An RNA of 177 nucleotides, treated with 2A3 and DMS and read out base by base.
The 2A3 profile rests on 2,484 reads.
For DMS the reverse transcriptase was MarathonRT.
Conditions: 150 mM KOAc, 10 mM MgCl2 and 150 mM bicine (pH 8.5), 24 C.
The DMS profile rests on 2,247 reads.

RNA sequence: GGGAACGACUCGAGUAGAGUCGAAAACUCCACAGACAAUCAUGGCCCUGAGCUUGGCUGUCCUUGGUUGGGUACAUCCAAGGCUCUGCCUGCCAGGGUAGGCACUGGCCAGGCUGUGGGAUGGCAGGCCCCAUCAACUAUUCGUAGUUGAUGGGGCAAAAGAAACAACAACAACAAC
Reactivity to 2A3 in 0.01 (KOAc 150mM, MgCl2 10mM, bicine 150mM(pH8.5), 24C), signal-to-noise 1, nucleotides 027 to 126: c020u040c000c000a010c020a020g130a050c030a060a170u100c050a110u210g210g010c000c000c000u060g030a020g030c050u130u130g030g000c000u020g030u020c020c000u040u030g050g030u030u080g030g000g170u180a080c000a030u030c010c000a020a010g050g000c160u020c020u060g010c010c000u010g000c010c010a100g000g000g070u000a000g000g000c030a040c300u200g120g000c000c020a040g000g110c000u000g020u040g020g000g000a050u090g090g040c060a040g000
Reactivity to DMS in 0.01 (KOAc 150mM, MgCl2 10mM, bicine 150mM(pH8.5), 24C), signal-to-noise 2, nucleotides 027 to 126: c080u000c000c030a070c070a040g020a110c080a100a050u000c170a120u010g010g010c010c000c020u000g010a100g010c020u010u000g000g020c010u010g020u000c000c000u010u000g010g030u020u000g010g000g020u010a070c020a020u000c010c010a020a030g000g020c130u010c060u000g000c000c000u000g010c000c030a090g000g010g030u000a020g020g000c040a120c190u020g000g000c030c000a170g000g010c010u000g020u000g010g000g000a060u020g010g010c090a130g000